[RMDB]
Notes
Structure probing data (2A3 and DMS) for a 177-nucleotide construct. The reactions ran in a buffer of 150 mM KOAc, 10 mM MgCl2 and 150 mM bicine (pH 8.5), at 24 C. Values cover nucleotides 27 to 126. For 2A3 the reverse transcriptase was SuperScript II with manganese.
RNA sequence: GGGAACGACUCGAGUAGAGUCGAAAAGAAGUCCGACACGCUGUCGCGGGGCGAUUUAGCACCUUUCCCGGGAAAGGCCCCGGAGCGAUUUAUGCACAUUUAUUAGAUCAGUGCCGAUCUAAAGAAAGACGUAGCCUAUAUUCGUAUAGGCUACGUCAAAAGAAACAACAACAACAAC
Reactivity to 2A3 in 0.01 (KOAc 150mM, MgCl2 10mM, bicine 150mM(pH8.5), 24C), signal-to-noise 2, nucleotides 027 to 126: g080a090a000g080u050c040c010g000a000c010a020c040g080c050u040g030u090c010g000c000g120g020g000g000c000g020a010u190u040u190a060g010c060a040c010c000u010u040u070c050c000c000g020g010g020a140a080a000g140g000c040c000c000c000g010g000a010g030c000g000a020u090u190u130a110u230g070c040a060c000a080u140u170u040a180u130u100a020g010a010u010c000a030g090u020g240c040c090g000a010u030c010u030a010a080a030g050a020a100a000
Reactivity to DMS in 0.01 (KOAc 150mM, MgCl2 10mM, bicine 150mM(pH8.5), 24C), signal-to-noise 2, nucleotides 027 to 126: g020a100a140g020u000c050c020g000a070c110a110c080g010c060u010g000u010c070g010c010g000g000g020g000c000g000a090u020u010u030a230g020c090a210c020c030u000u010u010c030c030c050g000g030g000a050a050a090g000g010c010c000c000c000g000g000a060g010c030g010a070u000u020u000a060u010g000c090a080c080a130u000u020u010a050u030u000a050g000a020u010c010a100g000u000g030c090c110g000a060u000c010u010a000a080a170g010a090a090a120